[RMDB]
Structure probing data (DMS) for a 177-nucleotide construct. Source: RMDB library OK2TRN, as collected in RNAgym. DMS adducts were read by reverse transcription with MarathonRT. In probing experiments dimethyl sulfate is read out at A N1 and C N3, which are open when not base-paired.
RNA sequence: GGGAACGACUCGAGUAGAGUCGAAAAGAGUGUAUGAGAUUACUUGACUGCUAGCCAGGGCACACAGACAGGGAGCCUAGCCCUCUUAAAGCCUCUAUCUCUCUGGCUACUCUGAUUCAGGUGCAGGCACUACAGGCAGCUUCGGCUGCCUGUAGUGAAAAGAAACAACAACAACAAC
Reactivity to DMS in 0.01 (KOAc 150mM, MgCl2 10mM, bicine 150mM(pH8.5), 24C), signal-to-noise 1, nucleotides 027 to 126: g030a080g000u000g000u030a060u010g000a110g000a170u020u000a080c050u000u000g000a120c070u000g000c300u020a090g000c030c010a020g010g000g010c300a020c190a060c230a060g010a120c060a040g000g000g010a070g000c040c010u000a110g000c060c010c010u000c060u000u000a030a110a200g000c000c010u000c010u000a010u000c030u000c000u010c010u000g000g010c020u010a060c130u000c030u000g000a120u010u000c010a050g040g000u000g000c140a060g000g020